Structure probing data (2A3 and DMS) for a 177-nucleotide construct.
Conditions: 150 mM KOAc, 10 mM MgCl2 and 150 mM bicine (pH 8.5), 24 C.
The DMS profile rests on 1,344 reads.
For 2A3, 3,392 sequencing reads were counted.
For DMS the reverse transcriptase was MarathonRT.
[RMDB]
RNA sequence: GGGAACGACUCGAGUAGAGUCGAAAAGAUAUGGACGUACUACUUUUGACGAGUUCUACUCGGAAACGAGUAAUACUCGAUAAGUAGGCGUCCUAAGUCAAAACGCCAUUUGUUCGCAAAUGGCGAACGUGAUGUGCAUGUUCGCAUGCACAUCACGAAAAGAAACAACAACAACAAC
Reactivity to 2A3 in 0.01 (KOAc 150mM, MgCl2 10mM, bicine 150mM(pH8.5), 24C), signal-to-noise 3, nucleotides 027 to 126: g000a020u030a000u070g010g010a010c020g040u190a300c070u020a020c000u140u110u300u300g300a300c110g020a010g020u000u000c060u080a000c000u000c000g000g030a010a020a010c000g020a000g000u000a000a000u060a020c010u000c000g130a160u080a240a010g010u000a000g000g010c000g010u000c000c000u000a000a000g000u010c010a000a030a130a160c020g010c010c000a010u010u010u000g090u060u110c300g000c170a010a010a000u000g000g000c020g010a000a000
Reactivity to DMS in 0.01 (KOAc 150mM, MgCl2 10mM, bicine 150mM(pH8.5), 24C), signal-to-noise 1, nucleotides 027 to 126: g000a020u000a040u000g000g000a020c000g000u000a210c010u000a000c000u000u000u000u020g040a260c040g020a020g000u000u010c140u000a010c000u000c000g010g000a020a020a030c000g000a000g000u000a000a050u000a020c000u000c010g050a070u000a010a010g020u000a000g010g010c010g030u000c000c000u000a010a040g000u010c000a100a060a160a250c040g000c000c000a010u000u000u000g030u000u030c300g010c000a000a010a020u000g020g000c000g000a000a020